[RMDB]
RNA sequence: GGGAACGACUCGAGUAGAGUCGAAAACAUUAUAACAGCGUUGUGAAGUAGAGGUGGGAUUAGGAACCUUCUGCUGUAAUCAACUCCCUUGCUGCCCAAACACCAGCCUCAUACACAACACCAACAGGACCAGCAUGGAGGGAAAUAUUCCAAGGGGGCUCAAGUAUAUGUUCGCAUAUACUUGAGCAAAAGAAACAACAACAACAAC
Reactivity to DMS in 0.01 (KOAc 150mM, MgCl2 10mM, bicine 150mM(pH8.5), 24C), signal-to-noise 2, nucleotides 027 to 156: c070a110u000u010a160u000a110a140c050a050g010c010g050u000u000g000u010g010a120a110g020u010a070g000a040g020g060u000g000g000g000a140u010u010a140g040g020a110a130c020c010u000u020c010u010g050c020u010g000u000a050a150u000c090a070a050c060u010c110c020c010u000u000g020c040u000g000c020c030c020a040a110a090c050a050c100c030a120g050c010c000u010c030a110u000a110c050a070c010a010a020c000a020c000c060a020a100c110a110g010g000a090c070c020a050g050c020a050u010g030g000a050g000g010g000a050a060a110u000a110u000u030c030c030a060a090g010g050g010g010
Reactivity to 2A3 in 0.01 (KOAc 150mM, MgCl2 10mM, bicine 150mM(pH8.5), 24C), signal-to-noise 4, nucleotides 027 to 156: c030a060u210u190a110u210a220a060c070a030g100c050g030u020u040g010u030g080a190a100g040u160a080g030a020g020g010u060g020g050g010a050u070u180a100g040g000a040a050c010c000u020u020c010u010g010c000u020g050u100a030a120u100c040a010a030c030u110c000c000c020u010u020g030c030u050g040c040c010c020a100a100a050c090a040c040c030a010g120c020c000u010c010a040u150a130c000a000c010a030a060c030a060c020c070a060a090c030a120g110g040a030c060c000a000g000c010a030u190g010g010a010g010g000g020a000a070a030u200a050u080u040c040c000a030a040g030g020g000g030